Structure probing data (2A3 and DMS) for a 170-nucleotide construct. Conditions: 150 mM KOAc, 10 mM MgCl2 and 150 mM bicine (pH 8.5), 24 C. The data come from the RNA Mapping Database (RMDB), library 15KLIB.
[RMDB]
RNA sequence: GGGAACGACUCGAGUAGAGUCGAAAAGGGGACUAUCCCUCUCGAGAAUCGGCAAAUGGGCCCCUCGCUCGUAUCUCCGAGAGGAGACGAGAAGGAGGCGGAUCUCCCUUUGCCAUCCGAGGGGACUAAACCCCGCCGUUCGCGGCGGGGAAAAGAAACAACAACAACAAC
Reactivity to 2A3 in 0.01 (KOAc 150mM, MgCl2 10mM, bicine 150mM(pH8.5), 24C), signal-to-noise 3, nucleotides 027 to 129: g000g010g010g020a000c020u050a050u110c020c010c010u050c010u000c000g300a300g060a100a040u110c050g000g000c020a020a030a050u090g000g000g020c000c000c000c000u010c000g020c020u010c000g090u130a210u040c000u000c000c010g050a080g010a030g060g010a000g000a000c000g000a020g000a000a110g200g020a000g000g000c160g000g000a000u070c240u170c020c000c000u020u000u010g000c000c000a000u000c000c010g000a000g000g000g000g000a010c000u010a000a000a050
Reactivity to DMS in 0.01 (KOAc 150mM, MgCl2 10mM, bicine 150mM(pH8.5), 24C), signal-to-noise 3, nucleotides 027 to 129: g000g020g010g020a090c220u060a190u010c080c020c000u020c040u030c040g050a130g040a150a070u000c270g030g030c030a030a000a000u010g010g000g030c040c000c020c000u000c000g030c000u000c000g040u000a170u020c000u060c000c000g000a090g030a140g000g000a000g040a000c210g000a020g030a140a050g080g000a030g040g000c200g030g000a190u260c110u020c030c040c040u090u000u000g000c060c000a020u050c020c010g000a000g000g010g000g030a210c050u010a100a130a050